[RMDB]
RNA sequence: GGGAACGACUCGAGUAGAGUCGAAAAGAUAUGGAACGCGCAGAUAAUCCCUCCGUUGAUCUCGGAAACGAGGGAGGAGAGGAUUGUAGCGUUCCUAAGUCAAAAGACGACAGUUCGCUGUCGUCAAGCUAUAGAAGCUCUUCGGAGCUUCUAUAGCAAAAGAAACAACAACAACAAC
Reactivity to 2A3 in 0.01 (KOAc 150mM, MgCl2 10mM, bicine 150mM(pH8.5), 24C), signal-to-noise 2, nucleotides 027 to 126: g030a020u080a050u150g010g000a000a000c000g020c020g040c240a060g050a300u120a120a020u040c010c010c000u000c000c000g140u300u010g000a020u000c000u000c000g030g000a100a070a040c020g010a010g000g020g010a000g000g020a020g040a090g000g010a010u010u020g020u040a020g000c000g000u000u000c000c000u000a000a000g020u000c000a020a000a010a240g000a000c000g000a000c010a000g010u060u110c160g070c120u000g010u010c020g010u010c000a000a000
Reactivity to DMS in 0.01 (KOAc 150mM, MgCl2 10mM, bicine 150mM(pH8.5), 24C), signal-to-noise 5, nucleotides 027 to 126: g000a040u010a300u010g010g000a010a010c010g010c010g030c230a190g020a090u000a040a020u000c000c000c000u000c000c000g020u000u010g000a020u010c000u000c000g000g010a090a070a210c000g010a010g000g000g010a010g000g010a010g010a120g040g000a010u000u000g000u010a170g030c000g000u000u000c000c010u000a010a070g010u000c060a080a060a100a090g000a010c000g000a020c000a000g000u000u010c230g020c010u000g010u000c000g010u000c000a010a060